Structure probing data (2A3 and DMS) for a 170-nucleotide construct.
Values cover nucleotides 27 to 129.
The data come from the RNA Mapping Database (RMDB), library 15KLIB.
For 2A3, 22,794 sequencing reads were counted.

RNA sequence: GGGAACGACUCGAGUAGAGUCGAAAAAAGUCUAGUACAACGUAUAAACUGACUGUAGGUGACAUCUUCGUACUUACCUCUCACUCUGUGGCUACCUUGACGGCGCCCACAAUUGUGAAUCAAGAGAAACGGCGUAAGUUCGCUUACGCCAAAAGAAACAACAACAACAAC
Reactivity to 2A3 in 0.01 (KOAc 150mM, MgCl2 10mM, bicine 150mM(pH8.5), 24C), signal-to-noise 9, nucleotides 027 to 129: a000a000g070u040c060u090a010g020u030a050c030a090a020c130g070u100a070u100a140a140a040c040u050g060a010c020u030g020u040a030g000g050u020g040a020c010a100u050c070u110u070c070g010u020a080c000u030u040a050c000c000u020c010u000c000a010c020u000c020u030g030u000g020g010c020u040a080c030c010u030u050g100a070c070g020g020c020g030c010c030c000a040c020a030a260u080u070g010u020g030a030a050u130c070a100a010g040a000g020a060a070a020c080
Reactivity to DMS in 0.01 (KOAc 150mM, MgCl2 10mM, bicine 150mM(pH8.5), 24C), signal-to-noise 6, nucleotides 027 to 129: a000a000g030u040c030u030a010g000u000a040c060a110a070c080g040u040a120u000a090a080a090c060u060g020a040c000u020g000u000a010g030g000u000g030a050c100a050u000c060u080u040c100g000u000a100c080u010u040a000c050c040u030c050u000c030a040c030u000c020u010g040u040g020g000c050u000a140c000c040u000u000g020a060c130g030g040c230g020c270c010c000a020c030a070a040u010u000g030u050g040a060a070u030c100a010a010g010a020g000a040a050a050c170